[RMDB]
RNA sequence: GGGAACGACUCGAGUAGAGUCGAAAAUCCUAAGUCUCCUACAUGCUUGGAUUUAGUCAUGGAGCGACUCGGAAACGAGUCGCGAUGAAAUGACUUGUCAGUGGGUAGGAGAUAUGGAAAAGUAUUGAUGAGUAGGUUCGCCUACUCAUCAAUACAAUCUUGAAUAAUAGUUCGCUAUUAUUCAAGAAAAAGAAACAACAACAACAAC
Reactivity to 2A3 in 0.01 (KOAc 150mM, MgCl2 10mM, bicine 150mM(pH8.5), 24C), signal-to-noise 4, nucleotides 027 to 156: u010c010c000u020a110a020g030u000c000u000c000c000u000a010c000a040u080g020c010u100u170g190g010a090u300u190u170a010g000u000c000a010u010g020g010a010g000c000g000a010c000u000c000g020g050a100a110a080c010g000a000g020u000c000g000c020g010a060u000g000a000a030a000u000g000a000c000u000u010g000u000c000a020g010u030g020g120g000u010a000g000g000a000g000a000u010a000u010g010g000a040a080a030a060g010u000a000u000u000g000a000u000g000a000g000u000a000g020g030u040u120c260g050c010c000u000a000c010u000c000a000u000c000a000a000u010a000c000a000a010
Reactivity to DMS in 0.01 (KOAc 150mM, MgCl2 10mM, bicine 150mM(pH8.5), 24C), signal-to-noise 2, nucleotides 027 to 156: u020c010c000u010a060a260g010u000c000u000c000c010u000a020c000a030u000g020c000u000u010g070g000a050u000u000u000a020g020u000c000a040u000g000g010a270g000c020g010a030c010u000c010g030g020a180a150a270c010g010a020g030u000c000g000c010g000a040u010g010a110a080a030u000g000a030c010u010u010g000u000c030a060g020u000g020g020g040u000a020g000g010a000g010a010u000a010u010g000g070a100a110a140a140g000u000a010u000u000g010a010u000g010a030g020u000a010g010g010u000u000c300g000c030c000u010a010c000u000c000a000u000c000a000a000u000a000c010a090a090
This 207-nucleotide RNA was probed chemically with 2A3 and DMS. For DMS the reverse transcriptase was MarathonRT. Reactivities are rounded to 0.1 and cut off at 0 and 3.